[RMDB]
RNA sequence: GGGAACGACUCGAGUAGAGUCGAAAACCGUGGUAUAUUUCAUUGGCGAGUGUGUGCGUGCGUGUGCUGUGGCAGCGGCUUUUUUGGCUGCGCUCGGCGUGUGUGCUGUGUGUGCUUGCUGGUGCCCGACGGUAAAUGUAUUCGUACAUUUACCGUCAAAAGAAACAACAACAACAAC
Reactivity to DMS in 0.01 (KOAc 150mM, MgCl2 10mM, bicine 150mM(pH8.5), 24C), signal-to-noise 2, nucleotides 027 to 126: c020c020g010u020g000g000u010a060u030a090u020u010u020c030a040u000u010g010g010c030g010a030g020u000g020u000g010u000g030c000g010u010g000c000g020u010g030u000g010c000u010g010u020g010g020c000a090g060c010g020g010c010u000u000u010u030u020u010g020g000c000u000g010c020g000c000u000c010g010g010c030g020u010g000u000g010u000g010c010u020g060u000g010u010g010u000g000c010u000u000g010c010u000g010g010u010g000c080c020c300
Reactivity to 2A3 in 0.01 (KOAc 150mM, MgCl2 10mM, bicine 150mM(pH8.5), 24C), signal-to-noise 9, nucleotides 027 to 126: c010c010g030u150g010g010u070a160u060a120u170u160u060c020a020u020u030g010g000c010g000a010g000u020g000u010g000u010g030c010g000u020g000c010g010u040g010u020g000c010u020g040u210g120g000c060a120g000c060g020g000c000u100u100u050u030u180u300g030g000c000u000g000c000g000c000u000c000g010g000c010g000u010g000u000g000u010g010c140u070g020u000g000u010g000u010g020c000u000u000g000c000u000g010g000u010g000c010c010c020
About this RNA: An RNA of 177 nucleotides, treated with DMS and 2A3 and read out base by base. Source: RMDB libraries RFM100 and RFMREP, as collected in RNAgym. The reactions ran in a buffer of 150 mM KOAc, 10 mM MgCl2 and 150 mM bicine (pH 8.5), at 24 C.